RNA sequence: GGGAACGACUCGAGUAGAGUCGAAAAGCGUACUACACUUACUUGGAUUUAGGCAGGGAGCUUGAUGAGGCUCAUCCCAAAUAGGAUGAGCGUAGUCAAGCGAAGAACUGCCUUGUCAGUAAGUGUAUCGCAAAACCCUACACUUCGGUGUAGGGAAACCCAGCUAGAGAUUCGUCUCUAGCUGGGUAAAAGAAACAACAACAACAAC
Reactivity to 2A3 in 0.01 (KOAc 150mM, MgCl2 10mM, bicine 150mM(pH8.5), 24C), signal-to-noise 2, nucleotides 027 to 156: g020c020g030u140a110c040u010a000c000a000c000u010u000a000c020u100u250g180g020a060u300u270u230a010g000g000c020a000g000g010g010a000g000c000u010u000g000a030u010g010a000g000g130c010u000c000a000u000c000c000c040a300a300a200u300a110g000g000a000u010g000a000g000c000g000u010a000g000u000c020a000a000g000c040g000a000a000g020a010a000c020u020g000c000c000u000u000g000u000c000a000g010u000a010a020g000u000g020u000a010u030c030g000c000a000a000a110a110c000c000c000u000a000c020a020c000u030u210c300g240g000u000g010u000a030g000g000g000a030a000
Structure probing data (2A3) for a 207-nucleotide construct. Source: RMDB library RNAMAK, as collected in RNAgym. The 2A3 profile rests on 1,210 reads.